[RMDB]
RNA sequence: GGGAACGACUCGAGUAGAGUCGAAAAGUAGGUUAGCUGCGUUGUGUUAGCCUUGCUGGCUGGCGCGACAUCGCGGCGAAUUUUAAAUAAGUCAGCUAUAGGUGUAGAGCUGCAUGUAGCAGGGGUGAUGGACAGGAGUUCGAUUCUCCUCACCUCCGUCAUUGUCAAGCUUCGGCUUGACAAUGACAAAAGAAACAACAACAACAAC
Reactivity to 2A3 in 0.01 (KOAc 150mM, MgCl2 10mM, bicine 150mM(pH8.5), 24C), signal-to-noise 2, nucleotides 027 to 156: g160u200a020g040g060u100u120a010g000c000u000g010c030g000u020u010g000u010g020u060u140a000g010c000c000u020u170g020c120u080g000g000c000u000g000g010c000g000c000g020a020c030a010u080c000g000c020g000g000c000g000a010a010u060u200u070u180a070a110a000u090a050a000g070u060c000a000g020c070u060a080u060a200g000g010u080g000u020a070g040a020g030c020u020g030c050a100u100g170u210a060g090c030a070g010g000g000g000u020g020a080u150g010g040a000c120a120g000g000a010g020u100u090c030g080a020u120u040c010u010c000c000u000c010a070c000c000u050c060c030

Chemical mapping of a 207-nucleotide RNA with 2A3. The reactions ran in a buffer of 150 mM KOAc, 10 mM MgCl2 and 150 mM bicine (pH 8.5), at 24 C. For 2A3, 768 sequencing reads were counted. The data come from the RNA Mapping Database (RMDB), library ARCHII.